[RMDB]
RNA sequence: GGGAACGACUCGAGUAGAGUCGAAAAGGUAUGUAAAAUCCGAUCGUUAGACGAUGCGAAAAAAACAUACAUUCAUACAUUGCCCGUGAUUAAUCUAGUUAAUCCUAUCUGAUAUCGAUUCAGAUCAGUGAUCAUAUCGUACCACGUCUCGGAUAAAUCAUGGUAGCGGAUUCGUCCGCUACCAUGAAAAAGAAACAACAACAACAAC
Reactivity to 2A3 in 0.01 (KOAc 150mM, MgCl2 10mM, bicine 150mM(pH8.5), 24C), signal-to-noise 1, nucleotides 027 to 156: g060g000u030a010u000g000u040a010a040a070a110u030c040c040g050a120u080c160g010u030u090a040g010a100c060g000a060u110g100c060g050a080a030a020a020a020a020a020c060a010u130a030c000a000u090u150c000a000u060a150c040a130u120u240g100c000c000c040g040u070g000a030u040u110a100a120u070c050u100a010g070u050u120a010a000u000c000c010u000a020u010c010u010g000a000u010a130u180c240g070a070u040u150c000a000g020a000u000c070a010g010u010g170a040u080c000a090u070a000u100c010g010u080a130c080c010a040c040g040u000c010u010c020g000g010a000u000a050a130a010

Source: RMDB library OK3TST, as collected in RNAgym. Structure probing data (2A3) for a 207-nucleotide construct. The 2A3 profile rests on 456 reads. Reactivities are given for positions 27 through 156. Conditions: 150 mM KOAc, 10 mM MgCl2 and 150 mM bicine (pH 8.5), 24 C.